[RMDB]
RNA sequence: GGGAACGACUCGAGUAGAGUCGAAAAAGGCCAAUAGCGGAUAUCACUCUCAUGCUGGAGUGCAGAGAGUGAGAAACGUUCCGGCGCUGUAGGAUGUGGCUGCGGCCGAUUAGGUAGAUGGUGGGGUCAAUCAAACCUAGUUCGCUAGGUUUGAUUGAAAAGAAACAACAACAACAAC
Reactivity to 2A3 in 0.01 (KOAc 150mM, MgCl2 10mM, bicine 150mM(pH8.5), 24C), signal-to-noise 2, nucleotides 027 to 126: a000g060g020c040c020a070a010u120a090g000c020g020g030a020u030a010u110c000a010c000u000c010u000c030a200u040g000c020u110g150g300a210g100u130g040c020a010g000a000g000a000g000u010g000a010g030a000a070a010c030g010u090u000c010c030g010g010c030g000c050u050g050u070a030g020g100a090u080g060u070g100g000c010u010g030c030g050g000c020c000g000a010u040u050a040g020g000u020a030g030a140u070g000g080u100g000g020g010g010u030
Reactivity to DMS in 0.01 (KOAc 150mM, MgCl2 10mM, bicine 150mM(pH8.5), 24C), signal-to-noise 3, nucleotides 027 to 126: a100g010g010c000c020a060a160u010a070g000c010g010g020a080u010a150u000c000a010c000u000c000u000c010a080u010g020c010u000g010g020a160g010u010g020c000a020g000a010g010a010g030u010g010a000g000a050a110a070c050g000u000u010c250c110g010g010c050g030c020u000g000u000a090g000g010a080u010g010u010g000g000c040u000g010c090g010g010c010c020g000a080u010u000a050g010g010u000a060g010a080u010g000g020u000g010g000g020g010u000